[RMDB]
RNA sequence: GGGAACGACUCGAGUAGAGUCGAAAACUGUUGUUCAGUUUAAUUAUCGUAGAGACGGUCAACCAUUCUACGAGCGGUUUCCCCUCUGCGCUUUUACAAAUCUAGAUAAGUUGAAGUUCAAAGAGGUAUACGUGUCGGUUCGCCGACACGAAAAGAAACAACAACAACAAC
Reactivity to DMS in 0.01 (KOAc 150mM, MgCl2 10mM, bicine 150mM(pH8.5), 24C), signal-to-noise 4, nucleotides 027 to 129: c010u000g020u040u030g010u100u000c130a090g040u000u000u090a100a040u020u040a040u040c040g000u060a070g030a140g020a020c140g010g080u000c280a240a100c100c000a160u000u040c070u050a020c040g000a000g090c210g090g000u000u080u000c000c070c040c010u000c020u010g020c280g000c030u010u000u000u050a050c020a030a110a100u030c140u030a080g020a110u030a090a190g180u010u010g000a000a070g000u000u010c180a050a080a000g020a010g010g050u010a060u020a140
Reactivity to 2A3 in 0.01 (KOAc 150mM, MgCl2 10mM, bicine 150mM(pH8.5), 24C), signal-to-noise 2, nucleotides 027 to 129: c060u050g000u030u000g070u030u120c000a130g000u040u000u030a040a000u030u100a040u040c000g000u030a000g050a000g010a040c130g000g080u020c000a090a090c140c000a000u000u300c020u000a090c060g000a050g010c060g000g000u040u000u000c030c020c010c020u050c110u120g000c000g000c040u000u090u000u000a080c020a000a270a000u060c060u090a000g110a220u140a130a110g010u000u070g000a000a100g060u000u000c020a000a160a000g050a000g210g050u000a000u210a050